[RMDB]
This 177-nucleotide RNA was probed chemically with DMS and 2A3.
The reactions ran in a buffer of 150 mM KOAc, 10 mM MgCl2 and 150 mM bicine (pH 8.5), at 24 C.
For DMS, 1,600 sequencing reads were counted.
For DMS the reverse transcriptase was MarathonRT.
The 2A3 profile rests on 3,014 reads.
It was measured as part of the RMDB library OK1LIB.
RNA sequence: GGGAACGACUCGAGUAGAGUCGAAAACAUUUAAUAAAAGCAUUGUUCCUGCUAAUGAGGCAAAUACGCCUCCUCUAUCAAUAUCUCCGACUAUUAUUACAGGUGCAUCAGCUAUUUCUGCCAUACCAGCUCGAGUAUAGUUCGCUAUACUCGAGCUAAAAGAAACAACAACAACAAC
Reactivity to DMS in 0.01 (KOAc 150mM, MgCl2 10mM, bicine 150mM(pH8.5), 24C), signal-to-noise 2, nucleotides 027 to 126: c100a090u010u030u020a060a090u020a120a070a040a030g000c050a140u080u000g040u000u000c050c000u030g000c030u010a000a100u000g000a050g000g050c030a120a090a230u030a120c170g000c000c000u000c000c100u000c000u030a080u030c030a070a100u000a050u000c110u020c030c060g030a120c020u000a000u010u000a100u000u060a030c130a040g000g030u020g000c010a060u000c090a090g000c000u000a040u000u000u000c010u000g000c030c100a140u030a090c130c080
Reactivity to 2A3 in 0.01 (KOAc 150mM, MgCl2 10mM, bicine 150mM(pH8.5), 24C), signal-to-noise 5, nucleotides 027 to 126: c020a040u170u200u230a300a230u280a080a110a030a010g030c030a040u030u130g020u060u050c030c000u030g020c030u070a100a080u220g030a020g030g000c050a070a130a130u220a220c130g030c000c000u020c000c040u050c000u050a140u060c030a100a080u050a090u190c050u030c040c000g040a050c060u070a070u230u010a050u120u130a140c060a060g090g000u020g010c000a030u010c030a060g020c000u040a080u030u040u000c010u030g030c010c010a060u050a100c000c040